Chemical mapping of a 177-nucleotide RNA with DMS and 2A3.
It was measured as part of the RMDB library RFMREP.
For 2A3, 4,603 sequencing reads were counted.
The reactions ran in a buffer of 150 mM KOAc, 10 mM MgCl2 and 150 mM bicine (pH 8.5), at 24 C.
RNA sequence: GGGAACGACUCGAGUAGAGUCGAAAAGUGGCGGGCGCUUGUGAGUCAGCUUCUUGACGGUAGAUAAGUGUGGAUGGAGUGAGAGGAGGAGUCCUGUGUAUGUCGUUGUCAACGUCGACCGAGCGUCGUUUAUGCUAAGGUUCGCCUUAGCAUAAACAAAAGAAACAACAACAACAAC
Reactivity to DMS in 0.01 (KOAc 150mM, MgCl2 10mM, bicine 150mM(pH8.5), 24C), signal-to-noise 3, nucleotides 027 to 126: g020u000g010g010c060g020g000g010c060g010c060u000u010g010u000g000a140g000u010c040a060g010c110u000u010c060u000u000g020a080c080g020g010u010a050g010a080u000a030a080g020u010g010u000g000g010a100u010g000g010a090g010u000g010a070g010a080g020g000a080g000g020a090g010u000c010c030u010g020u000g020u000a050u010g010u000c040g000u000u000g010u010c060a070a050c110g040u000c050g000a070c050c020g010a090g010c050g020u000c100
Reactivity to 2A3 in 0.01 (KOAc 150mM, MgCl2 10mM, bicine 150mM(pH8.5), 24C), signal-to-noise 4, nucleotides 027 to 126: g060u050g030g040c060g020g040g040c050g010c090u110u070g070u060g080a060g010u030c040a010g000c010u120u020c020u020u070g020a030c010g030g030u060a050g060a120u080a100a110g050u040g060u070g200g000a050u060g020g030a070g040u100g020a080g000a010g010g030a020g020g030a010g010u010c020c020u050g010u030g010u070a110u150g050u010c030g020u040u060g070u040c020a060a030c070g030u050c020g030a060c040c020g020a020g020c000g020u050c020